An RNA of 177 nucleotides, treated with 2A3 and DMS and read out base by base. Reactivities are given for positions 27 through 126. For DMS the reverse transcriptase was MarathonRT. The RNA was probed in 150 mM KOAc, 10 mM MgCl2 and 150 mM bicine (pH 8.5) at 24 C. For 2A3 the reverse transcriptase was SuperScript II with manganese.
[RMDB]
RNA sequence: GGGAACGACUCGAGUAGAGUCGAAAAUUCGAUCCGGACCGGCUCAUCUCGGCAAGAGGCGGCAGUCCUCAGUGCUCUUACUCUUUCCUAUAAAGAGGAGACUGCUGGACUCGCCGCCCAAGCCCGACAUUCUUCUAAGCUUCGGCUUAGAAGAAUGAAAAGAAACAACAACAACAAC
Reactivity to 2A3 in 0.01 (KOAc 150mM, MgCl2 10mM, bicine 150mM(pH8.5), 24C), signal-to-noise 1, nucleotides 027 to 126: u030u000c020g020a050u030c050c040g000g020a010c010c010g020g000c010u000c020a080u050c040u040c020g000g000c030a030a050g130a140g060g030c020g000g000c020a000g000u000c030c010u000c010a080g000u120g170c010u020c020u070u240a240c000u030c000u030u020u080c080c090u130a140u200a290a020a010g010a000g020g000a000g000a000c000u010g040c060u020g000g010a000c000u000c040g000c020c000g000c000c000c000a000a010g000c000c010c000g010a000
Reactivity to DMS in 0.01 (KOAc 150mM, MgCl2 10mM, bicine 150mM(pH8.5), 24C), signal-to-noise 1, nucleotides 027 to 126: u010u000c100g010a130u000c040c040g010g010a060c100c040g030g000c060u000c040a130u000c040u000c030g030g020c040a160a120g010a100g010g030c000g000g030c030a010g000u000c010c000u000c020a010g010u000g010c070u000c010u020u000a300c020u000c000u000u010u010c210c130u020a160u000a010a040a020g010a020g000g010a030g000a020c000u000g000c220u000g000g000a010c020u000c160g010c000c010g000c000c000c010a040a130g010c010c010c010g010a220